[RMDB]
Conditions: 150 mM KOAc, 10 mM MgCl2 and 150 mM bicine (pH 8.5), 24 C. Chemical mapping of a 177-nucleotide RNA with DMS and 2A3. For DMS the reverse transcriptase was MarathonRT. 2A3 adducts were read by reverse transcription with SuperScript II with manganese.
RNA sequence: GGGAACGACUCGAGUAGAGUCGAAAAUUCAUGUGGUCUCUGAAAACAUUGACUAUGGAAAGAAUGAGACAAUUACUGUUAUUGUAGAUGGAUUUAAUGUAACCGGCAAUGUUACCAUUAAGAUUAAGAUAGCUAUCCCAUUCGUGGGAUAGCUAUCAAAAGAAACAACAACAACAAC
Reactivity to DMS in 0.01 (KOAc 150mM, MgCl2 10mM, bicine 150mM(pH8.5), 24C), signal-to-noise 3, nucleotides 027 to 126: u020u010c030a040u010g020u020g020g000u000c030u010c030u020g010a160a120a060a070c050a040u000u040g020a080c190u030a090u000g010g030a100a110a060g000a080a100u000g000a080g010a040c040a070a070u010u040a110c080u020g050u000u030a110u000u000g010u000a030g000a100u000g000g000a070u020u000u010a010a010u020g000u000a000a040c000c190g010g040c300a050a050u030g000u000u020a020c070c050a010u010u020a060a040g000a120u020u020a050a120
Reactivity to 2A3 in 0.01 (KOAc 150mM, MgCl2 10mM, bicine 150mM(pH8.5), 24C), signal-to-noise 2, nucleotides 027 to 126: u060u000c010a020u050g040u080g100g000u000c030u030c000u100g140a060a060a000a000c010a050u120u050g120a060c080u030a080u170g000g000a180a160a050g050a050a040u220g000a030g030a010c000a030a110u130u120a090c010u030g050u130u060a100u170u130g000u030a070g010a110u050g120g040a110u090u000u000a060a090u100g010u050a020a020c050c030g140g000c050a120a000u120g010u020u030a020c030c010a040u000u070a000a120g000a050u170u080a020a050